[RMDB]
RNA sequence: GGGAACGACUCGAGUAGAGUCGAAAACCGGGGCAACGCCUUGAAUUUGGAGAGCCUGGGAAUGUAACAAGGGGUAGGGAAAAUAACGAGAGCUGAGUUGGCUUCUCCUGUGCUGUUCCUGAGCUGUGGAACUUGCAAUCGCAGUCGGCUCUGACACCGGUUAUAACUACUUCGGUAGUUAUAACCGAAAAGAAACAACAACAACAAC
Reactivity to DMS in 0.01 (KOAc 150mM, MgCl2 10mM, bicine 150mM(pH8.5), 24C), signal-to-noise 2, nucleotides 027 to 156: c030c020g010g000g020g010c030a130a090c070g000c020c050u010u010g010a110a180u000u000u010g000g020a070g020a150g020c110c030u020g020g000g010a080a090u030g010u000a070a160c050a030a060g010g000g030g050u010a080g010g010g000a060a080a060a060u000a050a090c020g000a060g000a080g000c030u010g020a150g030u000u040g010g000c010u000u020c020u000c020c030u010g050u000g020c060u000g000u000u000c000c010u000g010a050g020c100u010g000u000g000g010a040a100c060u000u010g000c020a080a110u020c040g000c030a080g030u000c010g010g030c040u000c030u010g000a110c050a110c100
Reactivity to 2A3 in 0.01 (KOAc 150mM, MgCl2 10mM, bicine 150mM(pH8.5), 24C), signal-to-noise 3, nucleotides 027 to 156: c020c010g020g000g020g000c090a150a060c080g030c020c000u070u090g140a140a090u100u050u130g000g000a030g000a000g020c010c030u020g010g000g030a080a120u100g030u170a090a080c070a130a130g030g000g020g020u070a040g020g040g000a030a070a040a150u160a060a040c060g030a020g020a010g070c050u060g020a010g150u100u030g140g000c000u090u040c020u060c010c030u040g030u020g020c020u050g010u010u000c010c000u040g050a060g030c030u050g040u090g130g000a030a050c000u030u150g000c020a040a080u110c100g000c040a000g030u040c020g000g000c000u000c000u050g010a000c000a020c080
The record gives the reactivity of an RNA of 207 nucleotides to DMS and 2A3. The 2A3 profile rests on 1,811 reads. Conditions: 150 mM KOAc, 10 mM MgCl2 and 150 mM bicine (pH 8.5), 24 C. Source: RMDB library RSTRND, as collected in RNAgym. For DMS the reverse transcriptase was MarathonRT.